[RMDB]
RNA sequence: GGGAACGACUCGAGUAGAGUCGAAAACUCCUGCCAUUUGAGGGACGAAGCCGCCACCGGGCGCUCCCCUCGGACCUCCUCUGGAGGGGUUCACAUCCCCAACCCGCGGGCCGGCUACUCUUCUUUUAUAGCGCUUAGUUCGCUAAGCGCAAAAGAAACAACAACAACAAC
Reactivity to DMS in 0.01 (KOAc 150mM, MgCl2 10mM, bicine 150mM(pH8.5), 24C), signal-to-noise 3, nucleotides 027 to 129: c060u030c010c020u000g070c030c080a120u000u000u120g020a050g020g020g040a000c060g020a080a080g030c090c010g070c070c030a150c230c150g050g000g030c000g020c060u020c040c030c000c010u030c000g000g020a080c030c030u020c030c030u030c090u030g030g000a090g000g000g000g000u030u060c110a140c180a190u050c020c010c000c040a110a100c000c030c080g030c140g000g000g000c000c030g030g000c030u010a050c160u030c030u020u020c060u070u020u030u010a080u030a110
Reactivity to 2A3 in 0.01 (KOAc 150mM, MgCl2 10mM, bicine 150mM(pH8.5), 24C), signal-to-noise 5, nucleotides 027 to 129: c020u000c000c020u080g220c010c020a130u040u050u160g050a020g010g010g020a020c050g100a100a030g000c030c000g070c050c010a140c050c050g090g050g000c040g020c010u060c000c000c020c000u000c000g010g030a020c000c000u050c010c010u060c050u060g070g020a050g020g000g010g000u030u090c060a040c020a170u070c040c010c010c000a000a000c000c000c000g030c070g010g000g000c010c040g010g010c000u020a030c010u010c000u100u050c010u060u070u010u030a190u100a080
An RNA of 170 nucleotides, treated with DMS and 2A3 and read out base by base.
Values cover nucleotides 27 to 129.
Source: RMDB library 15KLIB, as collected in RNAgym.
2A3 adducts were read by reverse transcription with SuperScript II with manganese.
The RNA was probed in 150 mM KOAc, 10 mM MgCl2 and 150 mM bicine (pH 8.5) at 24 C.